[RMDB]
RNA sequence: GGGAACGACUCGAGUAGAGUCGAAAAGGGAGCUGUAAGUAAGCUUUGAUCCGGAGAUUUCCGAAUGGGGAAACCUACUGUUCGUAAUGGAGCAGUAUCUUACACUGAAUUCAUAGGUGUAUGAAGGCUUCAAGCAAAAAUUCGUUUUUGCUUGAAGAAAAGAAACAACAACAACAAC
Reactivity to DMS in 0.01 (KOAc 150mM, MgCl2 10mM, bicine 150mM(pH8.5), 24C), signal-to-noise 8, nucleotides 027 to 126: g010g010g000a030g010c010u010g010u010a130a160g030u010a120a070g010c010u000u000u010g010a080u010c020c000g000g000a110g010a170u000u000u000c020c010g010a070a070u010g010g000g000g010a110a080a090c060c050u010a020c000u000g010u000u000c000g000u000a150a090u010g010g000a010g000c000a010g000u000a030u010c030u000u010a010c010a010c010u000g000a130a200u010u010c120a010u000a300g000g010u000g000u000a010u000g010a120a160g000g000
Reactivity to 2A3 in 0.01 (KOAc 150mM, MgCl2 10mM, bicine 150mM(pH8.5), 24C), signal-to-noise 4, nucleotides 027 to 126: g050g010g010a020g000c020u030g050u160a110a080g110u030a060a000g060c000u070u060u090g060a050u000c020c000g070g010a070g020a140u060u110u030c020c010g040a130a190u200g020g010g000g040a020a030a040c010c010u030a020c010u030g010u010u010c010g030u080a080a080u150g090g000a000g000c000a000g000u000a040u010c000u000u010a000c010a000c010u020g020a070a060u080u040c010a020u040a060g000g000u010g010u010a020u050g080a050a090g090g010